[RMDB]
An RNA of 207 nucleotides, treated with DMS and 2A3 and read out base by base. Source: RMDB library OK3TST, as collected in RNAgym. Reactivities are given for positions 27 through 156. 2A3 adducts were read by reverse transcription with SuperScript II with manganese. For DMS, 3,545 sequencing reads were counted. Conditions: 150 mM KOAc, 10 mM MgCl2 and 150 mM bicine (pH 8.5), 24 C.

RNA sequence: GGGAACGACUCGAGUAGAGUCGAAAACUCAACAUCAAGUGCUUGACCCUCACAGAUUUGUGUGCAUGUUGUUGCAAGCCGACUCACAGCAGCAACACCGUUUGCUGGAUCUGCACCAGUAUUUGAGAGCAACUCAAAUGCCUUUGCAUAAAGCGUAUAGCUAGUCUACUUUCGAGUAGACUAGCUAAAAAGAAACAACAACAACAAC
Reactivity to DMS in 0.01 (KOAc 150mM, MgCl2 10mM, bicine 150mM(pH8.5), 24C), signal-to-noise 2, nucleotides 027 to 156: c080u000c060a070a050c060a080u000c090a040a170g030u000g000c010u000u020g000a160c050c020c010u000c050a140c080a080g010a190u000u010u000g070u000g000u000g000c030a170u000g000u000u010g000u010u000g020c000a080a160g000c020c060g010a100c000u000c060a070c040a170g040c020a030g000c020a070a030c010a180c120c060g050u000u000u010g030c020u000g020g000a090u010c060u000g000c010a070c080c020a030g000u000a040u010u010u000g010a070g020a300g020c150a060a210c020u000c010a060a030a070u000g020c000c060u000u000u010g010c010a110u010a060a090a070g020c110g000u000a170
Reactivity to 2A3 in 0.01 (KOAc 150mM, MgCl2 10mM, bicine 150mM(pH8.5), 24C), signal-to-noise 3, nucleotides 027 to 156: c050u060c050a020a070c010a140u120c120a150a070g030u050g080c060u070u080g080a080c020c010c000u020c030a070c040a090g220a260u090u160u030g140u030g010u040g020c050a100u040g000u000u000g020u010u000g000c050a080a010g030c010c010g060a020c000u030c040a090c020a070g040c010a010g050c010a040a050c060a090c100c090g100u040u120u080g060c010u010g010g040a030u040c010u060g020c020a030c010c000a020g010u020a020u010u010u020g030a050g000a010g030c070a070a170c000u000c010a000a020a010u030g000c000c020u040u060u140g000c010a020u110a060a170a050g050c050g080u130a070